[RMDB]
RNA sequence: GGGAACGACUCGAGUAGAGUCGAAAACGUGCCAAUGUCAGGCGUAUAGUAAUGUCCAAUGACUCAGUAUCUCUACCAUGUUUAAUAGCAUUUUCUAUGAGUGGCUGAAGCAUCAUUUUACCAAUUGUCGAGCAACCCGUUUCGACGGGUUGCUCGAAAAAGAAACAACAACAACAAC
Reactivity to 2A3 in 0.01 (KOAc 150mM, MgCl2 10mM, bicine 150mM(pH8.5), 24C), signal-to-noise 1, nucleotides 027 to 126: c040g060u000g000c000c000a180a030u300g000u300c000a000g030g160c100g000u010a060u000a010g300u180a100a000u050g040u070c190c190a000a120u070g000a000c000u000c000a000g010u000a020u000c010u030c040u000a040c000c030a000u050g000u040u000u210a250a300u190a000g000c000a000u000u000u000u040c160u100a030u150g000a070g130u070g010g000c000u100g000a000a060g000c000a010u250c000a000u120u030u000u080a140c060c010a020a000u230u160g090
Structure probing data (2A3) for a 177-nucleotide construct. Values cover nucleotides 27 to 126.